[RMDB]
Structure probing data (2A3 and DMS) for a 177-nucleotide construct. The data come from the RNA Mapping Database (RMDB), library TTRDEL. Conditions: 150 mM KOAc, 10 mM MgCl2 and 150 mM bicine (pH 8.5), 24 C. 2A3 adducts were read by reverse transcription with SuperScript II with manganese. DMS adducts were read by reverse transcription with MarathonRT. The 2A3 profile rests on 3,963 reads.
RNA sequence: GGGAACGACUCGAGUAGAGUCGAAAAGAUAUGGAUGGAGCAGCUAACGACUAAUCGGAAACGAUUAGAGAACGUUAGACCCUGCUAUGAAGUCCUAAGUCAAAAGGUCAUGGUUCGCCAUGACCAACUUUCGAAGGAAGUUCGCUUCCUUCGAAAGAAAAGAAACAACAACAACAAC
Reactivity to 2A3 in 0.01 (KOAc 150mM, MgCl2 10mM, bicine 150mM(pH8.5), 24C), signal-to-noise 3, nucleotides 027 to 126: g030a030u090a050u170g010g000a020u020g030g080a000g000c010a000g030c010u010a000a000c020g220a170c020u000a000a000u000c010g040g060a060a030a030c010g010a010u000u000a000g010a000g050a180a020c030g000u000u010a000g020a020c070c000c030u000g040c010u120a300u300g050a040a000g020u000c000c010u020a140a020g030u030c060a000a030a090a170g010g000u010c000a000u000g000g050u060u110c300g070c100c000a000u000g000a000c000c000a000a000
Reactivity to DMS in 0.01 (KOAc 150mM, MgCl2 10mM, bicine 150mM(pH8.5), 24C), signal-to-noise 3, nucleotides 027 to 126: g000a040u010a300u010g000g010a030u000g000g020a000g000c000a060g000c010u010a010a000c000g040a180c000u000a000a000u010c000g000g010a120a130a210c010g000a010u010u010a000g010a070g010a080a090c010g020u000u000a020g000a110c210c230c020u000g010c020u010a140u000g010a070a200g010u000c030c000u010a050a180g000u000c020a070a060a100a060g010g010u000c000a010u010g000g020u020u020c250g020c000c000a000u000g020a020c000c000a010a020